[RMDB]
RNA sequence: GGGAACGACUCGAGUAGAGUCGAAAAAUGUUCUGUACCACAUGUUCUGAAACCAUUGCUAUUAGCUCUAAUUGCACAGAAGCAGUCAAAUGGUACUUGUUAGGCCUCUGCUGUCUACCUAGAACUGUUCAAAAACAUACAUGGGCCAGGCCCAAGACCGGAUAUUUAUGUUCGCAUAAAUAUCCGGAAAAGAAACAACAACAACAAC
Reactivity to DMS in 0.01 (KOAc 150mM, MgCl2 10mM, bicine 150mM(pH8.5), 24C), signal-to-noise 1, nucleotides 027 to 156: a100u010g030u010u000c000u010g010u010a090c020c010a080c050a060u000g030u020u000c050u000g000a100a190a120c100c030a200u010u000g000c020u000a130u000u000a070g020c020u010c070u000a080a110u010u000g020c040a230c080a100g020a130a130g020c050a030g000u000c040a010a100a040u010g000g050u000a050c020u010u010g020u000u000a080g000g020c040c020u020c050u010g000c000u010g000u000c020u000a040c050c040u020a120g000a110a070c080u000g000u010u000c000a060a080a070a110a000c060a150u000a050c030a070u000g000g060g030c070c050a060g020g010c080c000c000a030a130g010a280
Reactivity to 2A3 in 0.01 (KOAc 150mM, MgCl2 10mM, bicine 150mM(pH8.5), 24C), signal-to-noise 3, nucleotides 027 to 156: a000u100g000u040u020c010u030g040u050a040c010c000a060c020a130u070g020u080u010c040u050g060a150a080a050c040c020a090u070u040g000c030u080a110u230u100a140g030c050u010c030u120a110a090u110u110g030c050a050c000a060g060a110a040g040c010a030g040u110c070a040a050a110u070g000g020u010a060c030u040u080g080u050u060a050g010g010c000c030u050c070u070g060c010u010g020u030c010u010a030c010c010u040a040g030a080a060c040u050g000u040u040c030a010a060a000a130a000c020a060u160a020c040a070u030g000g000g000c040c050a050g050g060c050c020c030a020a010g080a030